[RMDB]
RNA sequence: GGGAACGACUCGAGUAGAGUCGAAAAGCCGCCGCCGCGGCCACCGGCAGCAGCCGCCCCGCAGCUUCCGCCCAGCUCCUCAGCCGCUCCACCCGCUGUAUUGCCUCUCCAGCAUCAGCCCGGCGACACACUUGAGAUCAUUCGUGAUCUCAAGUGUAAAAGAAACAACAACAACAAC
Reactivity to DMS in 0.01 (KOAc 150mM, MgCl2 10mM, bicine 150mM(pH8.5), 24C), signal-to-noise 1, nucleotides 027 to 126: g030c010c050g030c000c050g050c050c120g030c030g000g000c060c040a030c100c030g020g010c030a020g020c020a130g020c050c020g000c070c030c030c070g020c090a070g010c020u000u000c040c040g020c040c020c000a110g010c040u000c020c020u010c050a140g010c040c040g020c040u010c040c030a060c030c030c010g010c020u010g020u000a080u000u010g010c050c010u000c020u010c040c020a130g000c070a090u020c040a130g020c010c000c020g010g010c080g020a080c100
Annotation: Structure probing data (DMS) for a 177-nucleotide construct. The data come from the RNA Mapping Database (RMDB), library OK2TST. The reactions ran in a buffer of 150 mM KOAc, 10 mM MgCl2 and 150 mM bicine (pH 8.5), at 24 C. Reactivities are given for positions 27 through 126. DMS adducts were read by reverse transcription with MarathonRT.